The record gives the reactivity of an RNA of 177 nucleotides to 2A3.
The RNA was probed in 150 mM KOAc, 10 mM MgCl2 and 150 mM bicine (pH 8.5) at 24 C.
RNA sequence: GGGAACGACUCGAGUAGAGUCGAAAAGCAUCUAUUACAGAACUGGUAGUAGUGCUUUUGCUUCCUUGCAAUUGCUUGCAUGCCACUGUACGGCUGGCUCCUUUUUUUUUUCUUCUUUUGUUUUGUUAUGAACAAGUUUGUUCGCAAACUUGUUCAUAAAAGAAACAACAACAACAAC
Reactivity to 2A3 in 0.01 (KOAc 150mM, MgCl2 10mM, bicine 150mM(pH8.5), 24C), signal-to-noise 3, nucleotides 027 to 126: g010c010a010u190c030u020a010u020u010a010c020a040g300a300a170c130u230g100g000u000a000g000u000a000g000u000g010c000u000u010u000u010g040c020u040u010c000c000u000u080g020c020a090a110u070u110g020c030u030u070g040c030a010u110g040c020c010a040c050u050g060u150a050c060g030g000c040u010g050g040c000u020c010c020u040u050u070u000u000u040u000u040u090u130c050u140u040c000u000u120u010u010g020u000u030u030u030g040u020u010